[RMDB]
RNA sequence: GGGAACGACUCGAGUAGAGUCGAAAAGCAUAAUCAGCGUGGCAAGCAAAUGUUGCCACAUCAUCAGCAGCAUCAGCAACAGCACCACAGACGCCAGCGACAAUUUCGCCCACAGCGUCCACUUCCAGAAAAUGAGCUCAUUCGUGAGCUCAUUUUCAAAAGAAACAACAACAACAAC
Reactivity to 2A3 in 0.01 (KOAc 150mM, MgCl2 10mM, bicine 150mM(pH8.5), 24C), signal-to-noise 1, nucleotides 027 to 126: g010c030a070u080a160a070u240c100a050g170c040g060u020g010g000c010a010a020g040c030a050a100a260u220g010u040u050g020c010c010a000c010a000u050c020a010u000c030a000g000c010a000g000c000a000u060c020a030g030c010a010a030c010a060g000c000a010c030c010a010c030a020g070a020c020g050c050c020a020g000c000g030a010c040a100a140u130u160u000c040g000c000c010c000a080c040a020g040c030g050u000c030c020a050c050u080u000c000c020a000
Reactivity to DMS in 0.01 (KOAc 150mM, MgCl2 10mM, bicine 150mM(pH8.5), 24C), signal-to-noise 2, nucleotides 027 to 126: g020c020a010u000a100a070u000c110a060g030c120g020u000g040g050c000a080a030g010c180a050a130a100u010g010u000u000g020c010c000a010c030a050u000c060a060u010c090a050g030c070a060g020c020a040u020c020a070g000c010a070a070c090a070g030c050a060c030c100a020c100a170g000a070c120g020c000c060a120g000c040g030a030c290a050a070u010u010u050c040g010c020c010c030a110c130a080g000c070g020u000c040c120a050c080u000u000c030c000a050